Chemical mapping of a 177-nucleotide RNA with DMS.
RNA sequence: GGGAACGACUCGAGUAGAGUCGAAAAGAUAUGGAUUCUUUUUGACCUCAGUAAUGAGCAACAGCUCACGGACUCGGAAACGAGUUUGAGACAUGCUCGAUACUGAGGUCAAAAAGAAUCCUAAGUCCAGCAUUAUUGAGUUCGCUCAAUAAUGCUGAAAAGAAACAACAACAACAAC
Reactivity to DMS in 0.01 (KOAc 150mM, MgCl2 10mM, bicine 150mM(pH8.5), 24C), signal-to-noise 2, nucleotides 027 to 126: g000a080u000a300u010g010g010a000u000u000c000u000u000u000u000u010g000a010c000c010u000c000a010g010u000a010a150u020g000a000g020c000a040a090c300a190g010c080u000c000a080c300g020g000a000c000u000c000g000g010a100a110a190c010g010a010g020u000u000u000g010a100g020a040c100a110u000g020c030u000c010g000a110u000a000c000u000g010a010g000g010u000c000a010a000a000a000a020g000a000a000u000c000c000u000a010a060g000u010c020
The RNA was probed in 150 mM KOAc, 10 mM MgCl2 and 150 mM bicine (pH 8.5) at 24 C. For DMS the reverse transcriptase was MarathonRT.